An RNA of 177 nucleotides, treated with DMS and 2A3 and read out base by base. Conditions: 150 mM KOAc, 10 mM MgCl2 and 150 mM bicine (pH 8.5), 24 C.
RNA sequence: GGGAACGACUCGAGUAGAGUCGAAAAAGCUCAGUAGAAUGUUUUUUACGAUGCUGGCCACGUUUACCGGCACCUGUCUAACAUCUGUAAGCAGCUGGCUGAAAUUAAAAUUUUCGACGUUUAGGAAGUUUAAAUUAUCAUUCGUGAUAAUUUAAACAAAAGAAACAACAACAACAAC
Reactivity to DMS in 0.01 (KOAc 150mM, MgCl2 10mM, bicine 150mM(pH8.5), 24C), signal-to-noise 5, nucleotides 027 to 126: a080g010c020u010c080a110g010u010a060g010a060a050u010g000u000u000u000u010u010u000a040c060g010a110u000g000c000u010g000g010c040c070a100c150g010u010u010u000a090c050c060g010g010c080a040c080c040u000g010u010c080u010a080a080c050a050u000c040u000g010u000a070a090g020c030a050g010c040u000g010g020c030u000g010a080a050a090u000u000a030a050a060a100u000u000u000u000c010g000a070c080g010u000u010u000a080g020g010a080a120
Reactivity to 2A3 in 0.01 (KOAc 150mM, MgCl2 10mM, bicine 150mM(pH8.5), 24C), signal-to-noise 2, nucleotides 027 to 126: a010g070c050u070c060a000g000u050a010g050a130a060u050g050u030u130u010u050u030u040a040c030g000a010u050g000c010u000g020g010c000c010a090c040g020u040u010u050a020c010c040g060g000c030a060c060c050u090g040u070c050u070a070a050c010a060u090c010u040g040u040a030a030g040c020a010g030c030u010g010g020c040u030g050a030a010a060u050u100a030a120a030a040u020u060u020u000c010g040a030c020g020u040u070u120a080g020g060a110a000
Background:
DMS adducts were read by reverse transcription with MarathonRT. High 2A3 reactivity points to a flexible backbone, as in loops and unpaired stretches.